An RNA of 177 nucleotides, treated with DMS and 2A3 and read out base by base. Values cover nucleotides 27 to 126. Reactivities are rounded to 0.1 and cut off at 0 and 3. For 2A3, 11,639 sequencing reads were counted. 2A3 adducts were read by reverse transcription with SuperScript II with manganese.
RNA sequence: GGGAACGACUCGAGUAGAGUCGAAAAGGUCCAUUUCCUCAAUGGAAAUCCGGCAGAAUUCAGCGCGUCUCGGAGCUCUUGCACCAUGAGCUGAGCUUCUUCCGUGGAGUCCGCUCCAGCUAAAACAGACUCAUAUCAUGUUCGCAUGAUAUGAGUCAAAAGAAACAACAACAACAAC
Reactivity to DMS in 0.01 (KOAc 150mM, MgCl2 10mM, bicine 150mM(pH8.5), 24C), signal-to-noise 4, nucleotides 027 to 126: g020g020u020c020c040a080u000u000u000c020c010u020c170a110a050u020g000g000a020a120a030u020c100c000g010g040c070a040g000a060a030u020u000c050a040g020c000g010c060g000u000c100u030c110g020g000a090g020c010u000c130u010u000g040c040a090c050c030a080u020g000a090g010c000u000g010a050g010c140u010u000c020u000u020c050c020g010u010g020g010a100g020u000c030c100g020c060u030c020c030a090g020c100u020a070a080a150a120c160a170
Reactivity to 2A3 in 0.01 (KOAc 150mM, MgCl2 10mM, bicine 150mM(pH8.5), 24C), signal-to-noise 9, nucleotides 027 to 126: g090g010u010c030c020a020u020u020u030c020c030u120c100a090a150u160g030g010a040a020a020u050c040c020g020g000c030a020g030a090a080u110u080c020a040g010c030g010c020g090u040c030u050c080g020g020a030g010c000u020c020u100u210g010c050a060c060c040a130u140g050a010g030c020u020g010a010g020c010u020u010c000u050u020c020c030g050u080g030g010a020g010u010c030c040g010c020u000c010c020a070g040c080u130a050a000a030a090c070a040